Structure probing data (2A3 and DMS) for a 177-nucleotide construct. The DMS profile rests on 1,304 reads. The 2A3 profile rests on 926 reads.
[RMDB]
RNA sequence: GGGAACGACUCGAGUAGAGUCGAAAACUGGCCAAGAGAUAUUUCUUUCUUUUUUUUUGAGAUGAAGUCUUGCUCUGUCACCCAGGCUGGAGUGCAAUGGCACGAUCUCAGCUCACUGCAAGCUCCACUUUGUUGUACCAUUCGUGGUACAACAAAGAAAAGAAACAACAACAACAAC
Reactivity to 2A3 in 0.01 (KOAc 150mM, MgCl2 10mM, bicine 150mM(pH8.5), 24C), signal-to-noise 1, nucleotides 027 to 126: c010u030g120g000c000c040a030a000g060a000g030a090u000a100u070u060u000c040u030u250u070c090u030u170u030u130u090u010u020u180u290g020a090g000a030u060g040a080a040g020u010c040u070u080g000c010u010c040u000g050u040c060a050c010c020c000a000g050g000c060u060g020g000a050g050u020g000c040a080a190u120g140g000c020a020c050g040a090u020c040u030c060a000g000c040u010c050a020c040u030g080c050a020a160g000c010u020c020c020a020
Reactivity to DMS in 0.01 (KOAc 150mM, MgCl2 10mM, bicine 150mM(pH8.5), 24C), signal-to-noise 1, nucleotides 027 to 126: c080u000g020g030c080c180a110a080g000a070g000a080u010a030u010u010u000c030u000u000u000c000u000u010u030u000u020u030u030u020u050g000a050g010a040u010g010a060a050g010u000c090u010u030g010c030u000c060u000g000u000c070a090c020c020c020a080g020g020c080u030g000g020a040g040u020g000c020a090a050u010g020g000c000a080c110g000a090u000c040u000c050a040g000c020u000c030a030c080u010g000c060a040a040g010c050u000c030c030a140